Conditions: 150 mM KOAc, 10 mM MgCl2 and 150 mM bicine (pH 8.5), 24 C.
Chemical mapping of a 177-nucleotide RNA with DMS and 2A3.
DMS adducts were read by reverse transcription with MarathonRT.
2A3 adducts were read by reverse transcription with SuperScript II with manganese.
The DMS profile rests on 2,787 reads.
Values cover nucleotides 27 to 126.
Source: RMDB library TTRDEL, as collected in RNAgym.
RNA sequence: GGGAACGACUCGAGUAGAGUCGAAAAGAUAUGGACAUGGUAGGGAGUCGGUCGGAAACGACCCGACGAGGAUCUACGACCAUGUCCUAAGUCAAAACUGAUUCGCAUCUUCGGAUGCGAAUCAGAAGUAUUCUCAUACCUUCGGGUAUGAGAAUACAAAAGAAACAACAACAACAAC
Reactivity to DMS in 0.01 (KOAc 150mM, MgCl2 10mM, bicine 150mM(pH8.5), 24C), signal-to-noise 3, nucleotides 027 to 126: g010a030u000a300u000g010g000a010c000a010u000g000g000u000a090g000g000g000a130g010u000c010g010g000u000c000g000g000a060a070a220c010g000a020c050c030c060g030a010c010g020a140g020g010a120u000c090u000a110c140g000a090c060c000a010u000g000u000c000c000u000a010a080g000u000c030a080a070a100a160c000u000g000a010u000u000c010g020c000a000u000c000u000u000c180g020g000a000u000g000c020g000a000a000u000c000a000g010a000a100
Reactivity to 2A3 in 0.01 (KOAc 150mM, MgCl2 10mM, bicine 150mM(pH8.5), 24C), signal-to-noise 3, nucleotides 027 to 126: g020a010u060a030u110g000g000a000c010a000u010g000g010u040a020g070g010g020a070g010u010c020g000g010u020c010g000g070a100a090a020c020g030a060c090c280c040g000a000c020g000a070g050g040a070u030c040u100a090c120g110a030c000c020a000u000g000u000c000c000u000a060a020g040u010c010a000a020a080a180c000u000g010a010u010u000c000g000c000a000u000c020u040u030c230g180g000a010u000g000c000g010a000a000u000c000a000g000a010a000